[RMDB]
RNA sequence: GGGAACGACUCGAGUAGAGUCGAAAAGAUAUGGAUUAGGAAUGCUUUACAAGAAGCUCGAUAAGUCGUGUGUCGGAAACGACACCGACUUUUGACGAGCCUUGUAAAGCAUUCCUAAUCCUAAGUCCAGGGUAAUGUGGUUCGCCACAUUACCCUGAAAAGAAACAACAACAACAAC
Reactivity to DMS in 0.01 (KOAc 150mM, MgCl2 10mM, bicine 150mM(pH8.5), 24C), signal-to-noise 1, nucleotides 027 to 126: g010a100u000a300u000g010g010a000u000u010a000g000g030a040a020u000g010c000u000u000u000a000c030a010a000g000a140a110g010c000u000c000g010a170u000a010a010g020u010c000g010u010g010u000g000u000c010g020g000a140a100a200c010g000a010c010a000c000c000g000a000c000u000u000u010u010g020a140c120g000a020g050c020c000u010u000g000u010a010a000a010g000c000a000u000u000c000c010u000a000a000u000c000c000u000a010a060g010u000c040
This 177-nucleotide RNA was probed chemically with DMS. Reactivities are given for positions 27 through 126. The reactions ran in a buffer of 150 mM KOAc, 10 mM MgCl2 and 150 mM bicine (pH 8.5), at 24 C.